RNA sequence: GGGAACGACUCGAGUAGAGUCGAAAAGGUAAAUUUAGCUUUGAUGCUGAAAAAGCUGGUUUCAGAUUGCAAAAUGGAGAAACAUUGAAUUUUGCAGUAGUUAAACCUAUUACUGGUGACCUAUUACUCCCCCAUACCAUUUCGAUGGUAUGGGGGAAAAAGAAACAACAACAACAAC
Reactivity to 2A3 in 0.01 (KOAc 150mM, MgCl2 10mM, bicine 150mM(pH8.5), 24C), signal-to-noise 2, nucleotides 027 to 126: g020g060u060a020a040a170u120u090u090a040g000c010u040u120u090g130a120u130g140c090u090g090a040a020a000a090a000g040c110u100g000g070u000u000u000c020a070g010a030u050u000g000c000a000a000a040a000u070g060g070a170g090a090a090a110c220a080u110u280g110a200a010u010u050u050u000g000c000a000g010u060a030g000u050u100a040a000a000c020c000u020a090u010u080a010c040u030g090g000u210g030a050c000c030u000a080u030u140a060c040
Reactivity to DMS in 0.01 (KOAc 150mM, MgCl2 10mM, bicine 150mM(pH8.5), 24C), signal-to-noise 2, nucleotides 027 to 126: g020g000u020a040a040a120u020u000u000a020g060c000u010u020u000g000a130u030g020c050u010g020a010a010a010a130a110g040c060u000g010g020u000u000u000c140a160g010a050u000u000g000c000a000a020a000a000u010g060g010a290g020a110a150a160c240a190u040u010g020a280a030u000u000u000u000g000c030a000g040u000a060g020u030u010a020a010a000c020c000u010a040u030u000a010c050u000g030g000u010g000a080c110c060u000a040u040u020a080c110

An RNA of 177 nucleotides, treated with 2A3 and DMS and read out base by base. It was measured as part of the RMDB library OK1LIB. Values are in units of 0.01, from 0 to 300, in steps of 10. The DMS profile rests on 2,120 reads.